[RMDB]
RNA sequence: GGGAACGACUCGAGUAGAGUCGAAAAGGUUGUCUCGAUUCUUUCUAUCGAAUGUACCGGAAGACGGAUCAUCGUUCAAGUAUCCUCAAUUUCAUGGUAUACCUAAAAUCCACAAGAAACCUACUGGGAACGUUUUACAUUUCGAUGUAAAACGUUCAAAAGAAACAACAACAACAAC
Reactivity to DMS in 0.01 (KOAc 150mM, MgCl2 10mM, bicine 150mM(pH8.5), 24C), signal-to-noise 3, nucleotides 027 to 126: g010g000u010u010g030u000c080u010c290g000a110u000u000c100u000u000u000c050u020a090u000c060g030a120a120u020g010u000a040c000c010g000g000a070a020g010a170c140g010g000a080u010c080a070u000c100g040u020u000c110a070a110g020u030a040u040c010c030u010c150a060a090u000u000u000c060a130u010g030g000u020a010u000a030c100c030u020a020a050a060a140u020c040c020a050c140a050a070g030a090a030a080c050c040u010a110c050u000g000g030
Reactivity to 2A3 in 0.01 (KOAc 150mM, MgCl2 10mM, bicine 150mM(pH8.5), 24C), signal-to-noise 7, nucleotides 027 to 126: g040g000u040u020g090u070c030u020c050g020a050u090u030c050u050u190u040c060u060a070u040c040g040a160a140u110g010u040a040c000c020g000g000a020a000g070a020c040g000g010a020u040c030a020u070c060g130u130u130c080a070a000g050u050a050u020c000c000u050c030a050a110u030u020u090c040a050u090g010g000u020a020u030a070c010c010u060a060a040a030a110u040c050c020a080c030a090a050g090a060a050a020c020c010u080a100c120u090g080g050
Source: RMDB library OK1LIB, as collected in RNAgym. Structure probing data (DMS and 2A3) for a 177-nucleotide construct. For 2A3 the reverse transcriptase was SuperScript II with manganese. DMS adducts were read by reverse transcription with MarathonRT.